[RMDB]
RNA sequence: GGGAACGACUCGAGUAGAGUCGAAAACACAAUAAGUAAACUGACUGUGGUUUGCAUUGUGCUCAACAACUGUUAGCUUCAUCAGUCAGCUAGCGAGUGCUCACUAUCAAAACAAUUUCAUUGGUUAAGCACGGAGGUGAUUCGUCACCUCCGUGCUAAAAGAAACAACAACAACAAC
Reactivity to 2A3 in 0.01 (KOAc 150mM, MgCl2 10mM, bicine 150mM(pH8.5), 24C), signal-to-noise 2, nucleotides 027 to 126: c000a000c000a000a060u140a140a030g090u000a020a010a010c000u000g270a010c000u040g000u040g190g000u000u000u000g020c010a020u000u000g120u030g000c090u030c140a110a100c000a000a110c090u000g010u060u000a000g060c000u060u130c130a030u080c010a090g000u000c000a000g000c000u000a000g010c000g090a120g060u090g010c000u020c020a130c020u030a030u100c000a050a050a060a300c020a070a140u000u240u050c050a030u080u080g300g000u170u290a020